Structure probing data (2A3 and DMS) for a 207-nucleotide construct. For 2A3 the reverse transcriptase was SuperScript II with manganese. The DMS profile rests on 12,470 reads. Reactivities are given for positions 27 through 156. The RNA was probed in 150 mM KOAc, 10 mM MgCl2 and 150 mM bicine (pH 8.5) at 24 C.
[RMDB]
RNA sequence: GGGAACGACUCGAGUAGAGUCGAAAAGGCUGGUGCCGGAGCCGAUACCGGAAUACGAGACCUAAUGUGCGGUCGAAUGCACUGAAGUACGAAAGUACGAAGAGGUCAUACCGAGGACCGAGACUCGAUAUGCUCGGUAGAUGGAGCUUUACAUCAAAUUACUACUAAUCUUCGGAUUAGUAGUAAUAAAAGAAACAACAACAACAAC
Reactivity to 2A3 in 0.01 (KOAc 150mM, MgCl2 10mM, bicine 150mM(pH8.5), 24C), signal-to-noise 7, nucleotides 027 to 156: g040g000c030u050g050g070u080g040c010c010g020g010a010g020c040c090g050a040u070a090c000c020g000g060a100a040u150a060c100g030a050g050a120c000c010u080a090a060u140g010u020g010c010g010g030u100c100g060a060a050u140g000c010a000c020u040g040a080a010g010u010a000c000g040a100a040a010g010u000a010c020g010a040a010g080a030g020g010u010c010a000u040a030c020c040g000a030g010g030a010c010c020g020a020g030a070c030u030c070g070a120u080a040u240g040c010u010c000g000g010u000a020g000a010u050g040g030a050g040c040u090u100u090a050c010a030u050c030a030a170
Reactivity to DMS in 0.01 (KOAc 150mM, MgCl2 10mM, bicine 150mM(pH8.5), 24C), signal-to-noise 5, nucleotides 027 to 156: g030g030c000u010g020g020u000g010c020c010g000g010a100g030c010c060g010a170u000a080c020c010g020g010a120a120u000a100c070g010a160g000a060c020c030u010a100a110u010g020u000g010c010g000g010u000c180g000a100a150u010g000c020a050c030u000g000a130a240g010u000a030c000g010a150a110a210g020u000a030c010g020a110a120g010a140g030g000u000c010a130u010a060c020c020g010a130g010g010a150c040c070g000a130g000a140c040u000c020g010a100u000a060u010g010c010u000c010g030g010u000a030g000a150u000g010g010a100g000c040u000u010u000a100c050a090u000c060a070a110